[RMDB]
RNA sequence: GGGAACGACUCGAGUAGAGUCGAAAAUUGACGCACCAUGCUAUUGCUUUAACGCUGAGGGUGAUGCAUCCUGGUCUUCUACUAUGAUCUUCUCUCUUCACCCCGUCGAGUGUGACGAGGAGUGUUCGAACUCCAAUCUUCGGAUUGGAGAAAAGAAACAACAACAACAAC
Reactivity to DMS in 0.01 (KOAc 150mM, MgCl2 10mM, bicine 150mM(pH8.5), 24C), signal-to-noise 9, nucleotides 027 to 129: u040u060g020a090c060g020c050a050c040c040a090u040g030c030u020a090u000u000g000c030u020u030u030a080a100c190g000c050u030g020a040g030g000g030u020g040a090u000g000c040a010u000c020c080u000g000g000u030c030u000u000c040u040a090c090u030a050u050g030a090u030c040u000u000c000u020c010u000c080u030u030c060a070c000c000c000c000g040u010c060g000a120g050u040g020u050g060a050c070g020a070g030g010a110g020u030g010u020u040c050g000a090a150
Reactivity to 2A3 in 0.01 (KOAc 150mM, MgCl2 10mM, bicine 150mM(pH8.5), 24C), signal-to-noise 9, nucleotides 027 to 129: u060u090g050a020c030g010c020a030c010c010a030u080g030c020u090a100u210u140g030c030u120u110u200a140a040c090g020c040u030g050a070g020g030g010u040g020a060u040g010c010a030u040c010c020u010g020g010u020c010u060u020c000u040a080c010u040a120u250g040a060u010c000u060u000c020u000c000u000c010u030u050c010a040c000c010c010c010g040u050c020g040a200g140u170g030u170g070a000c010g010a090g040g010a120g010u020g040u030u040c050g030a040a030
An RNA of 170 nucleotides, treated with DMS and 2A3 and read out base by base. It was measured as part of the RMDB library 15KLIB. For 2A3 the reverse transcriptase was SuperScript II with manganese. For DMS, 75,357 sequencing reads were counted. The RNA was probed in 150 mM KOAc, 10 mM MgCl2 and 150 mM bicine (pH 8.5) at 24 C. DMS adducts were read by reverse transcription with MarathonRT.